[RMDB]
RNA sequence: GGGAACGACUCGAGUAGAGUCGAAAAGCUAUGUUACGAUAAUGUGACUAGCCAUUAUCGGAGGUACUCGACUCCGUAACAUAGGUCGAGUGGCUGUCCGUACUGGCUAGUCACAGUACGACAGUCGUCGAGUCCUGACUGUGACAGCCCUCAGGAACGAAUGAUGCUAGUUCGCUAGCAUCAUUCGAAAAGAAACAACAACAACAAC
Reactivity to 2A3 in 0.01 (KOAc 150mM, MgCl2 10mM, bicine 150mM(pH8.5), 24C), signal-to-noise 2, nucleotides 027 to 156: g050c080u130a110u230g020u150u110a030c070g040a100u120a120a050u080g020u030g000a030c040u040a000g000c000c000a020u020u030a100u170c010g000g000a000g000g000u000a000c000u000c010g000a010c000u050c180c110g040u050a030a020c050a070u240a050g030g030u000c020g000a000g000u010g090g010c000u050g250u080c010c000g010u000a000c020u000g000g000c000u000a000g000u000c000a000c000a020g010u000a020c000g110a010c000a050g040u040c000g040u000c030g040a020g070u040c000c020u040g000a010c020u050g030u080g010a010c010a000g050c030c020c000u000c090a040g010g000a000a070
Reactivity to DMS in 0.01 (KOAc 150mM, MgCl2 10mM, bicine 150mM(pH8.5), 24C), signal-to-noise 1, nucleotides 027 to 156: g040c140u010a030u000g020u000u000a070c000g020a070u000a020a060u020g020u000g020a050c000u000a050g060c040c030a080u000u000a040u000c000g000g030a300g000g010u000a060c060u000c020g030a070c000u000c080c100g020u000a020a100c160a120u000a030g000g020u000c000g010a050g020u000g010g000c030u000g020u000c030c050g050u000a030c040u000g000g010c010u000a060g020u030c020a010c020a020g060u000a050c060g000a190c010a080g000u000c020g000u000c000g010a180g050u000c010c000u000g020a080c030u020g050u020g010a100c140a110g010c010c010c000u020c000a020g000g040a090a300
An RNA of 207 nucleotides, treated with 2A3 and DMS and read out base by base. Conditions: 150 mM KOAc, 10 mM MgCl2 and 150 mM bicine (pH 8.5), 24 C. DMS adducts were read by reverse transcription with MarathonRT. For 2A3, 781 sequencing reads were counted. DMS (dimethyl sulfate) methylates the pairing face of unpaired adenines and cytosines. The data come from the RNA Mapping Database (RMDB), library OK3TST. 2A3 adducts were read by reverse transcription with SuperScript II with manganese.